[RMDB]
RNA sequence: GGGAACGACUCGAGUAGAGUCGAAAAGACAAGAGGCGGCAGUCCUCAGUGCUCUUACUCUUUUCUGUAAAGAGGAGACUGCUGGACUCGCCGCCCAAGUUCGAGCAUGGGCCACGUUCCGAACGAAGAGACGCGGGAGGAAGGGUCAAGCCCCCGAGUCUUCAGAUAACUUCGGUUAUCUGAAGACAAAAGAAACAACAACAACAAC
Reactivity to 2A3 in 0.01 (KOAc 150mM, MgCl2 10mM, bicine 150mM(pH8.5), 24C), signal-to-noise 1, nucleotides 027 to 156: g010a010c050a070a040g090a070g030g010c000g010g040c000a000g000u000c000c020u020c010a020g010u130g120c020u000c020u100u260a280c010u030c000u090u110u090u070c210u230g300u300a060a010a030g010a000g000g000a010g010a000c000u030g110c070u000g000g000a010c010u020c080g000c000c000g000c000c000c000a010a010g000u060u040c000g000a010g050c030a080u160g020g000g030c000c010a150c110g170u050u020c000c010g000a000a050c010g020a120a100g100a010g090a110c240g030c000g070g010g010a030g000g010a010a070g030g000g000u000c020a020a050g000c060c050c010c010c000g030a040
The record gives the reactivity of an RNA of 207 nucleotides to 2A3. The 2A3 profile rests on 539 reads. The RNA was probed in 150 mM KOAc, 10 mM MgCl2 and 150 mM bicine (pH 8.5) at 24 C. 2A3 adducts were read by reverse transcription with SuperScript II with manganese. Reactivities are given for positions 27 through 156.